Structure probing data (2A3 and DMS) for a 177-nucleotide construct. Conditions: 150 mM KOAc, 10 mM MgCl2 and 150 mM bicine (pH 8.5), 24 C. The data come from the RNA Mapping Database (RMDB), libraries RFM100 and RFMREP. For DMS the reverse transcriptase was MarathonRT.

RNA sequence: GGGAACGACUCGAGUAGAGUCGAAAAGAACGUCGUGAGACAGUUCGGUCUCUAUCUGUAGUGGGCGUUGGAAUUUUGAGUGGACCUGACUCUAGUACGAGAGGACCGAGUUGGACGUACCUCUAGUGAAAACAUAUGGGUUCGCCCAUAUGUUUUCAAAAGAAACAACAACAACAAC
Reactivity to 2A3 in 0.01 (KOAc 150mM, MgCl2 10mM, bicine 150mM(pH8.5), 24C), signal-to-noise 3, nucleotides 027 to 126: g050a020a000c030g010u030c050g100u190g140a120g020a070c060a040g010u010u030c020g010g010u000c020u000c000u030a120u040c050u060g080u070a030g090u060g050g000g040c120g040u000u020g050g060a180a170u090u060u070u160g120a150g080u110g010g060a070c000c040u070g040a060c000u000c010u030a060g070u080a050c050g010a000g000a020g080g020a000c020c020g010a010g010u020u030g050g000a020c050g020u020a070c030c000u040c020u020a070g040u010
Reactivity to DMS in 0.01 (KOAc 150mM, MgCl2 10mM, bicine 150mM(pH8.5), 24C), signal-to-noise 3, nucleotides 027 to 126: g000a030a030c020g020u000c000g010u020g000a160g000a200c000a060g040u000u000c010g010g010u000c020u010c010u000a050u020c040u000g010u000a060g000u000g010g000g010c110g050u010u000g010g020a080a100u000u020u050u020g000a080g000u010g010g000a080c080c030u010g010a040c000u000c000u000a070g010u000a040c040g010a050g000a150g000g000a070c050c030g000a030g010u000u000g020g000a030c050g020u000a090c080c030u000c080u000a050g000u010
For 2A3 the reverse transcriptase was SuperScript II with manganese.